[RMDB]
RNA sequence: GGGAACGACUCGAGUAGAGUCGAAAAGCCAGCCUGGACGGGCGAGAGGCGCGCAUAGCAGCGGAGGCGUCCAAGGUGGAGCGCCAUCUGCAGCUGGUGGGCGUCACGGCCAUCGAGGACAAGCUGCUCACCUUCCCAUUUUCGAAUGGGAAGGUGAAAAAGAAACAACAACAACAAC
Reactivity to DMS in 0.01 (KOAc 150mM, MgCl2 10mM, bicine 150mM(pH8.5), 24C), signal-to-noise 2, nucleotides 027 to 126: g010c010c040a230g010c010c000u000g000g040a030c070g010g020g000c010g000a080g010a070g030g010c020g000c000g000c060a030u000a040g020c020a080g010c010g000g010a080g000g010c000g030u000c000c010a170a210g010g020u040g040g000a100g010c010g000c010c000a080u000c000u000g000c010a070g010c010u010g010g080u010g000g000g030c000g000u000c010a080c000g000g010c000c000a050u000c020g000a060g010g000a100c060a070a140g000c050u000g000c170
Reactivity to 2A3 in 0.01 (KOAc 150mM, MgCl2 10mM, bicine 150mM(pH8.5), 24C), signal-to-noise 2, nucleotides 027 to 126: g040c010c010a000g000c000c010u050g080g010a020c040g040g020g140c030g020a090g030a060g010g000c000g000c020g030c000a020u020a030g000c020a000g000c010g030g000a010g000g020c010g000u000c020c010a080a150g300g080u240g010g020a100g060c010g000c000c020a300u010c010u000g010c010a020g000c010u070g030g030u020g000g110g000c030g000u020c030a010c030g060g030c010c010a010u010c030g140a010g000g000a040c050a080a020g020c050u060g000c010